The data come from the RNA Mapping Database (RMDB), library TTRDES. Structure probing data (DMS and 2A3) for a 177-nucleotide construct. The 2A3 profile rests on 5,420 reads. The DMS profile rests on 4,985 reads. DMS adducts were read by reverse transcription with MarathonRT.
[RMDB]
RNA sequence: GGGAACGACUCGAGUAGAGUCGAAAAGAUAUGGACCCUUGGAGGAGCUUGUAUUCGGAAACGAAUAUUGAGCGCGAAACUCCUUGGGUCCUAAGUCAAAAGAACAGACGCUUCGGCGUCUGUUCAAUCACGUUAUAAUGUUCGCAUUAUAACGUGAAAAAGAAACAACAACAACAAC
Reactivity to DMS in 0.01 (KOAc 150mM, MgCl2 10mM, bicine 150mM(pH8.5), 24C), signal-to-noise 3, nucleotides 027 to 126: g000a020u000a000u000g000g000a010c000c000c000u010u000g010g020a020g020g000a000g030c000u000u000g010u000a010u000u000c000g030g000a000a000a010c000g020a010a010u000a000u000u020g030a010g030c000g060c230g000a180a040a090c010u000c000c000u000u000g000g000g030u000c000c000u000a000a050g000u000c010a090a090a140a160g000a020a010c000a030g010a020c020g020c010u000u010c300g050g010c000g000u010c010u000g000u000u000c010a070a150
Reactivity to 2A3 in 0.01 (KOAc 150mM, MgCl2 10mM, bicine 150mM(pH8.5), 24C), signal-to-noise 1, nucleotides 027 to 126: g000a000u000a000u050g010g010a020c010c010c000u000u000g020g000a020g010g000a060g000c010u000u010g010u010a010u000u010c010g000g010a000a000a000c000g010a000a010u030a030u180u300g010a010g000c000g000c050g190a180a010a020c010u000c000c000u000u010g000g000g000u000c000c000u000a000a010g000u000c000a000a000a000a040g010a010a000c000a030g020a010c000g060c010u140u200c300g230g020c000g020u020c010u010g000u020u000c000a000a010